An RNA of 207 nucleotides, treated with DMS and 2A3 and read out base by base.
The DMS profile rests on 3,152 reads.
The data come from the RNA Mapping Database (RMDB), library M2RFPK.
DMS adducts were read by reverse transcription with MarathonRT.
For 2A3, 2,760 sequencing reads were counted.

RNA sequence: GGGAACGACUCGAGUAGAGUCGAAAACGGGGUUGGAUCCGACUCUCAUAGGCUCUCCAACCCAACUCCUACUCAAUACGUCCGCGUCGUACAGAACGGUAACAUGUUUUCCGAACAUCCGCGCUUGCAAACCUGCCAAAGUUCGCUUUGGCAGGAAACACUAUUUUGGUUUCGACCAAAAUAGUGUAAAAGAAACAACAACAACAAC
Reactivity to DMS in 0.01 (KOAc 150mM, MgCl2 10mM, bicine 150mM(pH8.5), 24C), signal-to-noise 2, nucleotides 027 to 156: c120g020g020g030g020u000u010g020g020a050u000c040c000g020a040c020u000c090u000c150a200u000a090g010g000c030u000c100u000c000c040a020a080c040c000c010a030a030c020u000c030c010u000a070c030u000c020a160a150u010a130c020g040u000c000c070g000c040g050u020c040g000u000a120c040a150g000a080a120c050g020g000u000a060a100c110a160u040g000u000u000u000u010c080c040g040a110a050c030a100u000c040c040g000c060g000c040u000u020g000c040a030a060a160c000c010u000g040c020c010a020a000a020g000u000u010c240g040c000u000u000u000g010g000c010a020g000g000a020a070
Reactivity to 2A3 in 0.01 (KOAc 150mM, MgCl2 10mM, bicine 150mM(pH8.5), 24C), signal-to-noise 4, nucleotides 027 to 156: c040g020g000g000g020u020u000g030g010a090u300c000c020g110a120c070u120c040u030c140a140u190a200g000g000c000u000c000u000c010c000a010a000c000c000c000a000a000c000u010c000c000u010a050c010u030c050a040a100u050a150c050g050u010c040c010g000c030g020u100c000g000u050a060c010a100g060a100a020c010g000g020u070a030a030c040a170u180g070u060u080u060u050c020c020g020a040a000c010a080u020c020c010g020c000g010c090u060u090g040c030a040a090a150c000c000u000g000c010c000a000a000a010g020u040u080c120g010c090u010u000u000g000g000c000a000g000g010a000a000